[RMDB]
RNA sequence: GGGAACGACUCGAGUAGAGUCGAAAAUCCUAAGUCAGAAUAUUCACCCGAAGAACUACGUUGUCAGUUAUUCGGAAACGAAUAACUUGGAUUUACGUAGGGAGGGUGAAAUAUUCUGAUAUGGAAAAACAAGAUGGCACUUCGGUGCCAUCUUGAAGAUUAGUGGGGUGUUCGCACCCCACUAAUCAAAAGAAACAACAACAACAAC
Reactivity to 2A3 in 0.01 (KOAc 150mM, MgCl2 10mM, bicine 150mM(pH8.5), 24C), signal-to-noise 1, nucleotides 027 to 156: u000c000c000u020a060a000g010u000c000a000g000a000a000u000a000u020u000c010a010c000c030c020g130a300a030g000a070a010c000u000a000c000g000u020u000g010u020c010a000g000u000u000a000u000u000c000g030g070a060a050a000c000g000a000a000u000a000a000c000u060u140g080g010a030u220u290u120a000c000g000u000a000g000g000g000a000g000g000g000u010g010a000a000a000u000a000u000u000c000u000g000a000u010a000u000g010g030a000a090a060a030a000c000a000a000g000a000u000g020g000c000a020c050u100u120c300g070g000u000g000c020c000a000u000c000u000u000g000a000a000